RNA sequence: GGGAACGACUCGAGUAGAGUCGAAAAGAAAGAAAGAAGCGAGCUGGCGCAGCCGCACGGGCAACCGUCAAUCCAGCACUUCACAAGUCUUGUCGUACUGACAGGACAUCCAUCAACCCACCGGGAAAAAAGGACUACAGCUUCGGCUGUAGUCCAAGAACAGACUUUAGUUCGCUAAAGUCUGUUCAAAAGAAACAACAACAACAAC
Reactivity to 2A3 in 0.01 (KOAc 150mM, MgCl2 10mM, bicine 150mM(pH8.5), 24C), signal-to-noise 1, nucleotides 027 to 156: g020a010a000a040g020a010a120a000g030a040a000g010c030g130a040g000c050u000g030g000c080g010c100a060g100c060c110g040c020a020c030g000g000g000c040a040a210c050c010g040u060c020a020a060u040c000c000a000g010c010a010c000u060u060c020a080c010a140a110g000u000c000u000u010g000u000c010g080u170a220c130u280g000a010c000a000g000g040a000c000a000u030c020c000a070u080c020a100a120c000c010c020a040c080c110g000g090g000a130a170a000a010a020a010g010g000a020c000u000a000c000a020g040c000u050u120c240g110g020c000u000g000u000a000g000u010c000c000a000a000